RNA sequence: GGGAACGACUCGAGUAGAGUCGAAAAUCCGGCACCUGGAUGUGGAUUCUCCACGGCAACGUAACUGAACGCGGAGACGUCGGCAGGAGUCCUGGGAAGAGUUCUCUUUUCUUCUUGACGGCCUAUCGUGCAGCAUGGUCUUCGGACCAUGCUGCACAAAAGAAACAACAACAACAAC
Reactivity to 2A3 in 0.01 (KOAc 150mM, MgCl2 10mM, bicine 150mM(pH8.5), 24C), signal-to-noise 1, nucleotides 027 to 126: u070c000c000g000g000c000a080c000c110u090g020g050a060u010g160u140g120g000a030u120u000c090u120c000c040a060c080g010g000c020a140a000c130g080u270a100a100c050u150g220a050a050c020g000c000g000g050a030g010a050c040g060u130c000g020g030c060a040g030g030a020g080u050c070c050u010g000g040g030a000a080g000a010g090u220u010c090u000c000u100u130u000u000c020u080u010c050u000u000g010a000c000g050g000c060c000u070a130u120c180